[RMDB]
RNA sequence: GGGAACGACUCGAGUAGAGUCGAAAAGAUUAGAGCCACCUUGGUACGACAAGUAGCUUUAGCUGCUUGAACGUCACGACAGUGACGGCCCGGAGGGUGAGGCUCGCAGAGCCGAAUAAUCCACCUCAAUCUAGUUCAUGUUCGCAUGAACUAGAUUAAAAGAAACAACAACAACAAC
Reactivity to 2A3 in 0.01 (KOAc 150mM, MgCl2 10mM, bicine 150mM(pH8.5), 24C), signal-to-noise 9, nucleotides 027 to 126: g040a020u080u140a030g010a010g050c010c000a040c020c010u030u080g020g020u080a060c070g040a040c100a000a000g000u010a000g010c010u180u230u240a080g000c000u000g000c000u000u000g020a090a020c000g000u000c010a000c020g170a100c090a090g000u000g010a000c000g020g010c010c020c010g040g030a090g010g020g010u050g050a070g010g010c000u000c010g000c040a050g000a000g020c010c010g010a040a040u060a030a010u020c020c020a050c010c040u050c050
Reactivity to DMS in 0.01 (KOAc 150mM, MgCl2 10mM, bicine 150mM(pH8.5), 24C), signal-to-noise 9, nucleotides 027 to 126: g000a060u010u010a030g010a180g000c030c000a060c010c010u000u010g010g010u010a100c190g010a210c020a000a010g020u000a010g020c010u020u030u020a120g030c000u000g010c000u000u000g000a070a130c010g020u010c010a020c010g020a140c300a100g000u000g000a010c010g000g000c030c020c100g000g000a070g000g010g000u010g000a140g000g000c000u000c010g030c190a090g010a040g010c010c000g010a100a120u010a040a040u000c010c050a130c040c010u010c140

Structure probing data (2A3 and DMS) for a 177-nucleotide construct. 2A3 adducts were read by reverse transcription with SuperScript II with manganese. Values are in units of 0.01, from 0 to 300, in steps of 10. DMS adducts were read by reverse transcription with MarathonRT. The RNA was probed in 150 mM KOAc, 10 mM MgCl2 and 150 mM bicine (pH 8.5) at 24 C. As a SHAPE reagent, 2A3 marks flexible, mostly unpaired nucleotides at the ribose 2'-OH.